[RMDB]
This 177-nucleotide RNA was probed chemically with DMS and 2A3. Reactivities are given for positions 27 through 126. The data come from the RNA Mapping Database (RMDB), library OK2TRN. The reactions ran in a buffer of 150 mM KOAc, 10 mM MgCl2 and 150 mM bicine (pH 8.5), at 24 C. 2A3 adducts were read by reverse transcription with SuperScript II with manganese.
RNA sequence: GGGAACGACUCGAGUAGAGUCGAAAAGGGCGUCGCACCUCAGGUGGAACUCUCUGUCCCCCAUCCUGUAGAGCCUGAAAGAGUUGCGGUGCCUGGGGUCGGGAGCCGCCAGCCUCACUGCCGAUGGCCCAAGGACGGUAUUCGUACCGUCCUUGGGAAAAGAAACAACAACAACAAC
Reactivity to DMS in 0.01 (KOAc 150mM, MgCl2 10mM, bicine 150mM(pH8.5), 24C), signal-to-noise 2, nucleotides 027 to 126: g000g010g020c000g040u000c040g010c050a030c030c040u000c030a020g000g020u000g010g000a110a080c070u000c030u010c030u000g020u020c030c000c010c050c060a060u010c100c060u000g010u010a060g020a150g020c040c010u000g000a120a110a120g000a050g000u000u000g040c030g000g020u000g010c030c000u000g020g000g000g020u010c040g000g000g010a160g000c060c030g020c020c050a040g000c020c010u010c060a080c080u000g000c020c060g020a080u000g000g000
Reactivity to 2A3 in 0.01 (KOAc 150mM, MgCl2 10mM, bicine 150mM(pH8.5), 24C), signal-to-noise 1, nucleotides 027 to 126: g060g010g010c030g040u020c030g040c020a020c020c000u020c020a040g060g060u140g080g150a250a210c020u030c000u040c040u160g130u300c020c000c020c000c010a090u070c010c000u000g090u180a070g000a020g150c000c000u020g060a070a000a000g050a050g000u050u050g090c020g060g080u030g000c020c020u000g000g000g000g000u000c020g000g030g010a030g010c020c010g040c000c000a000g000c000c000u060c000a080c030u050g030c000c020g020a060u090g100g000